[RMDB]
RNA sequence: GGGAACGACUCGAGUAGAGUCGAAAAUGGGAGGAAAGAGAACCCUUGGGGAAAACACCCGGAGCCUGCCUAUACUCUGGCCGGAGCAUCCCGGCGCCCAGUUGAGGGAGAAAGAGGAAUGGAAAUGAUAUAUAUCGAGAUUCGUCUCGAUAUAUAUAAAAGAAACAACAACAACAAC
Reactivity to 2A3 in 0.01 (KOAc 150mM, MgCl2 10mM, bicine 150mM(pH8.5), 24C), signal-to-noise 4, nucleotides 027 to 126: u090g000g010g010a060g020g040a160a060a040g050a050g030a070a060c000c010c020u030u050g040g000g000g030a020a130a060a060c030a070c010c020c000g000g020a010g030c000c010u040g000c010c000u070a070u030a090c030u020c030u040g040g000c020c020g020g000a060g080c040a100u120c020c010c000g000g000c000g030c010c010c000a040g020u130u160g050a110g010g030g000a040g060a030a050a000g040a010g030g040a060a060u080g050g060a060a080a080u180g060
Reactivity to DMS in 0.01 (KOAc 150mM, MgCl2 10mM, bicine 150mM(pH8.5), 24C), signal-to-noise 9, nucleotides 027 to 126: u010g000g010g010a100g010g000a060a070a090g010a140g000a120a150c050c040c020u010u010g010g000g000g010a110a080a110a140c100a090c080c010c020g000g000a090g010c040c030u000g010c020c020u000a080u030a120c060u000c040u010g010g000c020c020g020g000a150g020c150a100u030c130c010c010g010g010c060g000c030c010c010a100g010u020u010g010a140g010g000g010a070g010a040a100a030g000a050g010g010a080a080u010g000g010a080a080a080u040g000